[RMDB]
RNA sequence: GGGAACGACUCGAGUAGAGUCGAAAACUAGAUGUUUGGGAAACAUUGGUAAACAAAAGCAAAGAUCCCUGCUUUUAUGGAACUUAAGAUAUUCUGAGACACUGGAUCAUACAUUCUAGUGCAGUCACGACUGCGCAAUAUUCGUAUUGCGCAGUCGAAAAGAAACAACAACAACAAC
Reactivity to 2A3 in 0.01 (KOAc 150mM, MgCl2 10mM, bicine 150mM(pH8.5), 24C), signal-to-noise 4, nucleotides 027 to 126: c030u020a040g030a080u010g030u020u030u050g180g070g040a020a050a060c030a060u000u060g100g040u250a130a040a000c050a040a060a030a000g040c010a000a000a100g060a170u110c030c020c010u010g000c010u010u050u030u090a190u070g050g030a060a010c020u050u070a130a060g050a120u110a170u120u160c020u040g060a020g040a080c010a000c020u040g000g010a000u060c020a010u160a150c030a030u100u020c000u020a000g000u000g050c030a020g080u070c020a010
Reactivity to DMS in 0.01 (KOAc 150mM, MgCl2 10mM, bicine 150mM(pH8.5), 24C), signal-to-noise 2, nucleotides 027 to 126: c100u000a050g040a010u010g000u000u000u020g070g010g010a290a130a080c050a020u000u010g000g020u000a050a030a080c200a010a000a040a080g050c020a060a130a170g010a100u030c090c000c060u000g010c020u000u020u000u000a120u030g010g030a050a060c050u000u050a050a090g000a170u030a150u010u000c000u000g020a070g000a250c010a020c000u000g000g010a000u010c040a200u000a080c150a010u020u000c000u000a030g020u000g010c000a080g000u040c160a170